The record gives the reactivity of an RNA of 207 nucleotides to DMS and 2A3. For DMS, 2,451 sequencing reads were counted. 2A3 adducts were read by reverse transcription with SuperScript II with manganese.
RNA sequence: GGGAACGACUCGAGUAGAGUCGAAAAGAAAGAGAGUUAGACACGGUUGAUCUCACCCUUCGGGGGGGCUAUAGAGAUCACUGGAAGCACGACCGGACAACCGGAACAUUGCAGCAAUGCAGCCCAAAAAAUCCAAACAUCUUCGGAUGUUUGGAAAGAUUAGCUAUACGUUCGCGUAUAGCUAAUCAAAAGAAACAACAACAACAAC
Reactivity to DMS in 0.01 (KOAc 150mM, MgCl2 10mM, bicine 150mM(pH8.5), 24C), signal-to-noise 2, nucleotides 027 to 156: g020a100a090a140g020a120g020a060g010u000u000a160g020a190c070a190c010g050g000u020u000g010a030u010c010u000c030a170c030c000c020u000u020c170g010g000g000g000g000g020g000c040u010a120u000a120g020a070g000a060u000c000a060c040u000g000g010a160a140g020c060a070c040g000a120c020c040g000g000a160c100a090a190c050c000g000g000a040a080c140a110u000u010g010c000a130g000c050a100a130u000g020c090a010g020c030c020c040a000a050a070a070a090a170u010c010c000a010a000a030c000a040u000c000u010u000c300g030g030a000u000g000u000u020u000g000g000a000a000a060
Reactivity to 2A3 in 0.01 (KOAc 150mM, MgCl2 10mM, bicine 150mM(pH8.5), 24C), signal-to-noise 4, nucleotides 027 to 156: g070a000a100a000g090a000g020a000g030u140u140a050g060a080c040a010c120g030g000u100u200g010a020u000c000u000c000a020c000c010c010u060u120c250g030g000g000g000g000g010g000c030u090a050u030a130g000a000g000a000u000c010a000c010u010g020g050a030a020g010c040a000c060g060a000c020c020g010g010a060c050a170a250c030c020g020g020a060a010c020a020u090u150g000c000a000g010c020a020a050u050g000c000a010g000c020c000c010a070a070a040a000a000a020u020c000c010a000a000a010c000a000u010c000u060u040c130g110g000a000u000g000u000u020u000g000g000a040a000a000
The reactions ran in a buffer of 150 mM KOAc, 10 mM MgCl2 and 150 mM bicine (pH 8.5), at 24 C. It was measured as part of the RMDB library M2RFPK.